[RMDB]
RNA sequence: GGGAACGACUCGAGUAGAGUCGAAAAAGGAUCCCUGCGGGCACCCUCCGUCCUCCGGCGAUGUAUCCCGUGACUGGGCGAGCAGACACGGCGCGCGGGCCGAUUUUCCGCCCCGGACGUCCCCGUCUGUAAAGCUUAUUUUCGAAUAAGCUUUACAAAAAGAAACAACAACAACAAC
Reactivity to DMS in 0.01 (KOAc 150mM, MgCl2 10mM, bicine 150mM(pH8.5), 24C), signal-to-noise 8, nucleotides 027 to 126: a090g010g000a080u010c030c010c010u010g020c070g010g010g020c050a060c050c040c020u000c050c030g010u010c020c020u010c050c040g000g010c090g010a080u010g010u020a120u020c070c000c010g020u020g000a080c090u010g000g010g010c050g000a110g020c060a050g010a090c100a080c100g010g010c040g010c070g000c050g010g000g010c070c040g000a120u010u010u010u010c020c040g010c050c010c010c060g000g010a090c060g000u000c010c010c010c030g010u030c080
Reactivity to 2A3 in 0.01 (KOAc 150mM, MgCl2 10mM, bicine 150mM(pH8.5), 24C), signal-to-noise 9, nucleotides 027 to 126: a000g080g020a050u040c010c000c000u010g030c030g010g030g000c020a030c010c010c010u020c010c010g040u040c010c010u030c020c000g030g010c040g020a030u070g060u120a110u080c010c000c010g020u060g040a060c070u040g010g020g030c030g020a040g050c030a010g030a030c020a010c090g030g000c030g000c010g010c010g050g030g000c020c010g030a030u110u040u060u030c010c010g020c010c000c000c000g020g020a020c010g040u040c010c010c000c000g050u030c030
This 177-nucleotide RNA was probed chemically with DMS and 2A3. The reactions ran in a buffer of 150 mM KOAc, 10 mM MgCl2 and 150 mM bicine (pH 8.5), at 24 C.